[RMDB]
RNA sequence: GGGAACGACUCGAGUAGAGUCGAAAAAUCGUCGAUGCGGAAGAACUGGCGGGCGCAAUGACAGAACAACUUGCCUCGCUCUUUGAGGAGCAGGGGGCUGCCGCUUCCGUGCGCGGACGCCGGCGUAUAAUGAUACGUCCUUCGGGACGUAUCAUUAAAAAGAAACAACAACAACAAC
Reactivity to DMS in 0.01 (KOAc 150mM, MgCl2 10mM, bicine 150mM(pH8.5), 24C), signal-to-noise 3, nucleotides 027 to 126: a070u010c050g030u010c020g030a200u010g040c040g010g020a080a050g010a090a080c080u010g020g040c010g030g020g000c090g040c050a080a040u000g010a110c130a100g010a140a070c110a080a100c070u000u000g000c010c000u000c090g010c030u000c030u000u010u010g020a100g000g020a040g000c010a050g020g010g000g010g030c020u010g000c030c020g000c010u000u010c010c050g010u000g020c130g000c000g000g010a150c020g010c040c020g020g010c080g020u000a110
Reactivity to 2A3 in 0.01 (KOAc 150mM, MgCl2 10mM, bicine 150mM(pH8.5), 24C), signal-to-noise 2, nucleotides 027 to 126: a000u080c010g080u050c010g020a110u100g060c020g030g060a040a010g030a150a080c010u090g040g000c050g040g050g050c090g010c030a040a120u150g040a070c020a060g070a130a020c040a020a050c050u050u160g030c000c000u020c010g030c050u020c060u070u150u210g230a180g030g000a000g000c040a130g010g000g050g030g000c000u010g010c000c000g030c010u010u020c020c000g030u030g040c250g000c000g070g000a010c060g050c060c000g000g000c060g000u050a050